Conditions: 150 mM KOAc, 10 mM MgCl2 and 150 mM bicine (pH 8.5), 24 C.
Chemical mapping of a 207-nucleotide RNA with 2A3 and DMS.
As a SHAPE reagent, 2A3 marks flexible, mostly unpaired nucleotides at the ribose 2'-OH.
The 2A3 profile rests on 709 reads.
DMS adducts were read by reverse transcription with MarathonRT.
2A3 adducts were read by reverse transcription with SuperScript II with manganese.
Reactivities are given for positions 27 through 156.
The DMS profile rests on 3,825 reads.

RNA sequence: GGGAACGACUCGAGUAGAGUCGAAAAAACGCCAAAGGCGACAAGGCGCUCUCCCUUUUGAGAGCGAUGAACGAAUAAUAACGGAGGUACAUCAUGGAAGUUACAGCAGCGGAGCGCACCGCAAUCUACACCAACAUCAGCCCCCUCGCACAGCGCGAAGUGGAGGAAUAUUCGUAUUCCUCCACUUAAAAGAAACAACAACAACAAC
Reactivity to 2A3 in 0.01 (KOAc 150mM, MgCl2 10mM, bicine 150mM(pH8.5), 24C), signal-to-noise 1, nucleotides 027 to 156: a000a000c000g010c000c000a220a050a030g090g000c000g020a040c060a000a120g110g030c000g010c000u000c000u000c000c090c020u090u230u180u130g000a030g000a000g000c060g060a090u140g040a100a000c080g000a020a080u160a160a000u120a180a000c020g060g000a030g020g000u060a080c010a080u080c020a020u050g040g040a080a010g010u010u050a010c010a030g060c000a000g020c010g010g000a010g040c010g000c060a070c010c000g040c020a040a070u000c040u050a020c000a010c060c000a110a070c020a110u130c030a090g040c050c000c000c000c010u010c000g000c000a060c000a060g100c020g040c020g050
Reactivity to DMS in 0.01 (KOAc 150mM, MgCl2 10mM, bicine 150mM(pH8.5), 24C), signal-to-noise 2, nucleotides 027 to 156: a060a040c040g000c010c010a050a080a030g010g030c060g030a140c040a070a200g010g000c040g010c010u010c030u060c000c120c160u000u000u030u000g000a060g000a080g050c020g000a040u000g000a080a100c090g000a090a050u000a110a070u010a100a110c030g010g020a110g000g030u000a070c080a040u000c040a080u000g020g000a070a070g020u000u000a120c040a080g030c020a090g000c090g000g000a120g060c030g000c060a130c010c010g030c030a100a040u010c050u010a070c060a050c020c020a030a150c060a000u010c060a100g060c000c020c010c000c030u010c050g020c010a100c030a080g000c070g050c050g010